[RMDB]
RNA sequence: GGGAACGACUCGAGUAGAGUCGAAAAGAUAUGGAGUCGAGCGAUAAGUCGAAGUUCGGAAACGAACUUUCGACUUUUGACGCUCGACUCCUAAGUCAAAAGCAGUGAACGUUCGCGUUCACUGCAAGAUACAACAAUCGUUCGCGAUUGUUGUAUCAAAAGAAACAACAACAACAAC
Reactivity to DMS in 0.01 (KOAc 150mM, MgCl2 10mM, bicine 150mM(pH8.5), 24C), signal-to-noise 5, nucleotides 027 to 126: g010a040u010a300u010g000g000a030g010u000c000g010a010g010c000g020a150u000a020a050g020u000c000g000a030a020g000u010u000c000g010g000a060a040a130c000g000a010a010c000u000u000u000c000g010a010c000u000u000u000u000g010a180c050g000c000u000c000g010a000c000u000c000c000u000a000a050g000u010c040a080a100a150a130g000c000a000g010u000g010a010a000c010g020u010u020c260g010c020g010u000u000c000a000c000u000g010c000a000a010
Reactivity to 2A3 in 0.01 (KOAc 150mM, MgCl2 10mM, bicine 150mM(pH8.5), 24C), signal-to-noise 2, nucleotides 027 to 126: g000a020u030a020u070g000g010a000g010u000c010g000a010g010c010g070a100u060a300a110g000u010c010g010a010a000g000u000u020c010g000g010a000a010a020c020g000a000a020c010u040u050u010c000g000a010c010u010u010u010u000g000a000c000g000c000u000c000g000a000c000u000c010c000u000a000a000g000u000c000a000a010a030a080g000c010a000g000u000g010a010a000c020g020u080u160c300g020c030g160u020u010c020a000c000u000g000c000a000a000
Chemical mapping of a 177-nucleotide RNA with DMS and 2A3. For DMS the reverse transcriptase was MarathonRT. The DMS profile rests on 8,656 reads.